[RMDB]
RNA sequence: GGGAACGACUCGAGUAGAGUCGAAAAGUCCUGUGGAUUUUAAGUUCCCAAAACUGUUGCUUAGGACAUACAAGAUCGUUCAAUGUCCAAGAAGAAACCUGAGCCGCUACAAUCAUCGGUCUAAUCUAUUUAAGUGAUAGUUCGCUAUCACUUAAAUAAAAGAAACAACAACAACAAC
Reactivity to 2A3 in 0.01 (KOAc 150mM, MgCl2 10mM, bicine 150mM(pH8.5), 24C), signal-to-noise 9, nucleotides 027 to 126: g020u010c000c030u130g110u280g030g030a050u010u010u020u100a120a080g010u010u030c010c000c000a010a030a020a040c130u140g040u110u100g010c020u040u060a060g010g000a000c010a010u100a030c090a060a070g070a300u160c080g090u120u100c080a070a030u030g020u010c000c000a000a010g030a010a010g050a040a060a000c030c070u070g020a030g010c000c010g010c030u060a050c070a100a120u090c040a050u080c030g010g050u000c020u060a060a070u020c020u040
Reactivity to DMS in 0.01 (KOAc 150mM, MgCl2 10mM, bicine 150mM(pH8.5), 24C), signal-to-noise 8, nucleotides 027 to 126: g020u000c000c010u020g030u030g020g020a030u000u000u000u010a070a290g010u000u010c000c010c000a090a080a110a110c160u000g010u010u000g010c020u000u010a110g010g000a020c020a020u010a100c140a130a130g020a100u030c100g000u000u010c100a090a040u000g000u000c010c000a040a080g010a110a090g000a070a100a070c050c110u010g000a070g010c030c040g000c100u010a060c160a100a100u020c100a050u010c050g000g000u000c030u010a110a090u010c090u000